[RMDB]
Structure probing data (DMS and 2A3) for a 207-nucleotide construct. The 2A3 profile rests on 722 reads. Source: RMDB library OK3TST, as collected in RNAgym.
RNA sequence: GGGAACGACUCGAGUAGAGUCGAAAAGAGAACUAGAAACAAGCCUAAGAAACCUACCGAUCGGAGACCCAAGCGCUAUGCAGUGGACGCGCCACGGUUUUGCUAAACCCGACGAGAACGCCGAACCGAUCACCGUUGUAGAUGAAGUCCUAGGGGAGAAUGAACUAGGAUUCGUCCUAGUUCAUUCAAAAGAAACAACAACAACAAC
Reactivity to DMS in 0.01 (KOAc 150mM, MgCl2 10mM, bicine 150mM(pH8.5), 24C), signal-to-noise 2, nucleotides 027 to 156: g020a140g020a110a230c040u010a090g040a160a100a110c040a080a180g030c040c020u040a140a090g010a080a100a040c030c010u010a070c010c000g000a030u000c030g060g000a080g000a130c020c010c010a110a110g000c030g030c000u010a100u020g010c050a080g010u000g000g010a100c030g000c100g000c000c010a070c040g020g020u010u000u000u000g010c060u000a010a080a090c020c010c010g020a110c000g030a040g020a050a180c020g040c010c000g020a060a180c010c050g000a120u020c010a010c080c060g000u000u000g000u000a080g000a140u000g010a100a060g000u000c050c040u010a040g040g020g020g010a200
Reactivity to 2A3 in 0.01 (KOAc 150mM, MgCl2 10mM, bicine 150mM(pH8.5), 24C), signal-to-noise 1, nucleotides 027 to 156: g060a000g010a060a090c090u100a070g100a080a090a040c040a070a060g020c000c020u050a090a030g020a100a140a100c010c000u030a030c060c040g060a030u010c020g020g030a050g060a080c040c000c000a090a020g020c040g050c010u040a020u260g040c010a070g000u070g040g020a080c030g010c010g000c000c000a030c010g010g000u030u000u040u040g040c010u050a080a020a070c020c010c010g050a090c060g020a040g000a080a020c030g000c020c010g030a010a020c010c020g060a040u040c000a000c070c060g000u030u090g010u030a020g020a170u060g030a100a000g040u040c020c030u030a030g020g020g000g000a090
The DMS profile rests on 2,523 reads.